[RMDB]
RNA sequence: GGGAACGACUCGAGUAGAGUCGAAAAGAUAUGGAUUCAUGUCGUGUCUACCCACCGUAUGAACUACAAUGGAACGUCGGAAACGACGUUCAUGUUGCAUACGAGGACACGACAUGAAUCCUAAGUCGUUCUACAAUUGGUUCGCCAAUUGUAGAACAAAAGAAACAACAACAACAAC
Reactivity to DMS in 0.01 (KOAc 150mM, MgCl2 10mM, bicine 150mM(pH8.5), 24C), signal-to-noise 3, nucleotides 027 to 126: g030a090u000a300u010g000g020a010u000u010c010a010u020g010u000c000g030u000g000u010c010u000a060c050c060c160a300c090c000g000u000a000u000g000a050a070c150u010a270c050a070a040u020g010g010a000a010c000g000u000c000g000g000a140a090a300c010g010a020c010g010u000u000c000a040u000g010u010u000g000c000a000u000a000c000g010a060g010g010a000c000a010c010g020a020c000a000u000g000a000a020u000c000c000u000a020a100g000u000c110
Reactivity to 2A3 in 0.01 (KOAc 150mM, MgCl2 10mM, bicine 150mM(pH8.5), 24C), signal-to-noise 3, nucleotides 027 to 126: g070a030u110a080u210g020g020a000u020u010c010a000u000g000u020c000g000u030g000u010c030u060a210c080c040c070a050c060c000g020u000a000u070g050a190a190c120u150a050c300a200a170u210g220g040a030a000c000g010u000c020g030g030a100a080a120c020g000a000c010g000u000u010c010a010u010g000u000u020g090c010a000u020a000c020g000a050g010g000a000c000a020c020g000a000c010a000u010g010a000a000u000c000c000u020a020a000g030u020c040